[RMDB]
RNA sequence: GGGAACGACUCGAGUAGAGUCGAAAACUUCGCGGGUACCCAGCAACCUGCUCCCACGCGGCGAUUGCAAAGGACCCGGUUCGCUCUCCUUUUCUUAUUUACCUGCUUCAGACCGACCGCCCCGGGGAGUGAAUCACUGGAACCGCGAGAAAAAGGAGUCAAUACCAUUCUUCGGAAUGGUAUUGACAAAAGAAACAACAACAACAAC
Reactivity to 2A3 in 0.01 (KOAc 150mM, MgCl2 10mM, bicine 150mM(pH8.5), 24C), signal-to-noise 1, nucleotides 027 to 156: c020u030u010c000g000c050g000g010g110u130a090c030c000c000a020g000c000a030a050c000c010u100g000c030u000c000c000c030a220c030g000c000g000g080c050g120a120u110u120g050c120a150a090a150g080g000a070c020c070c000g000g000u070u080c080g010c030u090c040u030c040c000u020u160u130u040c120u190u120a180u220u110u150a160c030c030u030g020c000u040u020c100a090g020a180c030c040g040a050c000c030g000c000c010c040c000g000g000g000g000a000g000u010g030a040a070u050c020a000c080u000g000g000a010a040c000c000g000c100g010a000g060a000a160a020a000a000g110g020a070